[RMDB]
An RNA of 207 nucleotides, treated with DMS and 2A3 and read out base by base. The data come from the RNA Mapping Database (RMDB), library ARCHII. Conditions: 150 mM KOAc, 10 mM MgCl2 and 150 mM bicine (pH 8.5), 24 C. The 2A3 profile rests on 4,664 reads.
RNA sequence: GGGAACGACUCGAGUAGAGUCGAAAAGUCCACUCUCGUAAAUCCAGGCUCAACCAAAAGUAACUGCGAACAACAUCGUUCCUUUCGCUCGUAAGGCUGCUCCUGUAGCUGCUUAAACGCCACAAACUUUCUGGCUCGAGCGUCUAGUCGUAGACUCCUUCAUUCAAUAGUUCGCUAUUGAAUGAAGAAAAGAAACAACAACAACAAC
Reactivity to DMS in 0.01 (KOAc 150mM, MgCl2 10mM, bicine 150mM(pH8.5), 24C), signal-to-noise 2, nucleotides 027 to 156: g030u000c020c030a080c080u000c010u000c040g020u000a050a070a110u010c030c020a130g020g000c030u000c020a060a170c040c040a070a060a040a080g000u000a060a100c050u000g010c050g030a050a090c090a100a120c100a110u010c040g000u010u000c000c020u010u000u000c040g020c000u000c050g000u000a100a160g020g060c020u000g020c030u010c050c050u010g030u000a050g010c000u000g020c000u000u000a100a090a050c060g020c030c000a020c060a050a050a110c060u010u010u010c070u000g000g030c010u000c060g000a080g000c010g000u000c080u010a100g010u010c030g020u000a100g000a090c040u000c060
Reactivity to 2A3 in 0.01 (KOAc 150mM, MgCl2 10mM, bicine 150mM(pH8.5), 24C), signal-to-noise 5, nucleotides 027 to 156: g070u010c010c000a030c030u020c000u010c010g060u050a010a040a080u040c020c000a030g030g020c020u010c050a060a070c020c040a120a080a020a010g040u060a110a090c020u040g010c050g040a060a030c040a040a030c010a130u040c010g030u010u010c000c000u040u090u040c010g010c000u010c000g020u020a050a010g020g000c020u020g000c000u050c030c030u090g070u140a000g000c010u030g000c000u030u040a080a100a010c060g010c010c010a040c050a050a200a110c110u120u200u070c060u040g000g000c010u000c010g000a010g010c010g000u010c010u030a020g010u010c020g030u020a020g030a090c020u030c010